[RMDB]
RNA sequence: GGGAACGACUCGAGUAGAGUCGAAAAGCGGCCUUCGGGCCGCCAUCGGCGUACUACGGAAGGUCACCAGAGACAUGAGCUUGUUAUCCCAAAUAGGAUUUCAAGCUCAACAGCUCUGCAAGUCCUUCCGUAUCGCGGCAGGUAAGUUCGCUUACAAAUAUAGUUAACGGUUCGCCGUUAACUAUAUAAAAGAAACAACAACAACAAC
Reactivity to DMS in 0.01 (KOAc 150mM, MgCl2 10mM, bicine 150mM(pH8.5), 24C), signal-to-noise 2, nucleotides 027 to 156: g020c010g040g010c010c020u000u010c300g050g040g060c010c000g000c010c000a000u000c020g010g000c010g030u000a070c080u000a020c010g020g030a030a030g010g010u000c020a300c200c000a010g020a040g000a000c060a300u000g000a030g020c010u000u010g010u000u000a010u000c000c000c010a020a170a190u000a050g010g010a010u000u010u000c000a000a000g000c000u000c000a010a010c070a250g040c000u000c000u000g010c030a060a160g000u000c000c000u000u000c000c000g000u000a000u000c030g010c050g000g000c040a100g010g020u000a080a130g010u000u000c110g000c040u000u000a110c060a060a130
Reactivity to 2A3 in 0.01 (KOAc 150mM, MgCl2 10mM, bicine 150mM(pH8.5), 24C), signal-to-noise 1, nucleotides 027 to 156: g010c000g020g020c040c000u120u150c240g160g010g020c030c000g000c000c000a140u090c020g090g020c000g010u060a050c040u000a000c030g000g000a010a000g010g010u020c000a040c090c010a000g010a000g000a040c070a180u070g000a000g000c000u010u000g000u000u000a010u040c040c040c060a140a300a300u300a120g000g000a000u000u020u010c000a000a000g000c010u000c000a010a000c010a000g000c000u000c000u000g000c050a140a300g010u040c000c000u000u000c000c000g000u000a000u050c000g010c000g070g050c090a090g000g100u040a040a050g010u040u200c260g050c110u010u060a020c010a040a160

Background
This 207-nucleotide RNA was probed chemically with DMS and 2A3. DMS adducts were read by reverse transcription with MarathonRT.